The record gives the reactivity of an RNA of 177 nucleotides to 2A3 and DMS. DMS adducts were read by reverse transcription with MarathonRT. For 2A3 the reverse transcriptase was SuperScript II with manganese. The reactions ran in a buffer of 150 mM KOAc, 10 mM MgCl2 and 150 mM bicine (pH 8.5), at 24 C.
[RMDB]
RNA sequence: GGGAACGACUCGAGUAGAGUCGAAAAGCUGCUUCAUUACGGAGCUGUGUCCGGGGCCCCGGUGGAUUUCGAUCCGCCGGAGGGGUGGCCCUCCACCUCGACUCCAGUCCCUCGAGGAACGACUCGACAUCCGGUCCCUUUUCGAAGGGACCGGAUGAAAAGAAACAACAACAACAAC
Reactivity to 2A3 in 0.01 (KOAc 150mM, MgCl2 10mM, bicine 150mM(pH8.5), 24C), signal-to-noise 2, nucleotides 027 to 126: g010c000u010g010c000u010u030c050a230u100u300a050c240g030g000a010g010c060u050g020u040g000u060c080c030g000g000g000g030c000c010c010c000g000g000u000g000g010a000u070u040u060c220g130a020u000c000c000g000c000c000g000g030a020g000g010g020g010u080g000g020c000c010c010u000c020c000a060c000c040u020c010g030a000c010u000c000c020a080g080u040c060c000c010u000c000g000a070g000g030a140a020c030g110a080c000u000c000g050a030
Reactivity to DMS in 0.01 (KOAc 150mM, MgCl2 10mM, bicine 150mM(pH8.5), 24C), signal-to-noise 1, nucleotides 027 to 126: g050c070u000g000c000u010u000c000a070u000u160a100c300g020g000a060g040c040u110g040u000g000u040c120c100g050g000g000g000c120c050c000c000g000g060u000g000g000a000u000u000u000c300g000a090u000c060c000g040c140c000g000g000a090g060g000g010g300u000g000g000c140c000c220u020c040c000a020c040c200u000c000g210a210c100u000c000c250a300g000u000c070c090c050u000c000g000a000g010g000a090a170c210g000a140c000u000c000g000a210